[RMDB]
RNA sequence: GGGAACGACUCGAGUAGAGUCGAAAACUAGAAUCAAUUGAACCGUUGAUACUCGAUGCAAUCUGAUGUGGAGAGAACCAGAAUGCUUAUUCAGUCAGCAGAGGAAAUUGACCAUGAUGGAAACUGACGCUAGCGGUUGUUUCGACAACCGCUAGCGAAAAGAAACAACAACAACAAC
Reactivity to 2A3 in 0.01 (KOAc 150mM, MgCl2 10mM, bicine 150mM(pH8.5), 24C), signal-to-noise 2, nucleotides 027 to 126: c060u040a000g170a010a030u180c050a000a020u000u300g030a020a000c000c000g000u060u040g040a100u010a120c060u030c130g060a020u120g000c020a000a130u000c050u060g090a130u000g070u170g210g100a000g000a000g000a060a050c000c000a040g070a160a000u120g000c020u190u070a000u210u040c000a050g060u040c000a000g000c050a000g000a000g230g050a040a040a010u020u000g120a100c030c040a170u220g080a040u030g060g070a050a050a050c050u040g060a000